The record gives the reactivity of an RNA of 177 nucleotides to 2A3 and DMS. The data come from the RNA Mapping Database (RMDB), library OK2TST. For 2A3 the reverse transcriptase was SuperScript II with manganese. DMS adducts were read by reverse transcription with MarathonRT.
RNA sequence: GGGAACGACUCGAGUAGAGUCGAAAACGGGUACGAAUCGGCGGAAGACGUGGCCGACGUCGUGUACCGGGCGGCGGCGCGCGCACUCGCGAACCCGAUGACCUUCACGAGCGAAGGCGUCGGCGAGCUUACCAGGACGUUUCGACGUCCUGGUAAGAAAAGAAACAACAACAACAAC
Reactivity to 2A3 in 0.01 (KOAc 150mM, MgCl2 10mM, bicine 150mM(pH8.5), 24C), signal-to-noise 2, nucleotides 027 to 126: c010g010g000g080u170a040c040g070a060a100u060c030g020g020c030g020g110a090a030g120a100c020g030u050g090g000c020c000g010a010c010g000u000c020g000u050g040u190a130c050c030g010g030g000c010g020g010c000g000g000c040g000c010g000c000g000c140a030c030u050c010g020c020g020a030a030c010c010c000g010a010u030g070a160c010c000u010u000c060a090c200g250a090g140c150g040a040a000g010g020c000g010u000c000g010g030c030g010a010g000
Reactivity to DMS in 0.01 (KOAc 150mM, MgCl2 10mM, bicine 150mM(pH8.5), 24C), signal-to-noise 3, nucleotides 027 to 126: c070g020g000g010u020a060c050g010a120a130u000c090g010g030c010g010g000a130a090g010a150c040g010u010g010g020c010c020g010a040c020g000u000c000g000u010g020u010a080c080c040g000g000g010c010g020g010c010g010g010c020g040c050g030c030g020c110a100c080u000c030g000c010g010a060a190c220c010c000g000a010u010g010a180c010c010u000u000c020a110c200g000a150g010c170g010a030a020g000g000c020g000u000c010g000g000c060g000a100g000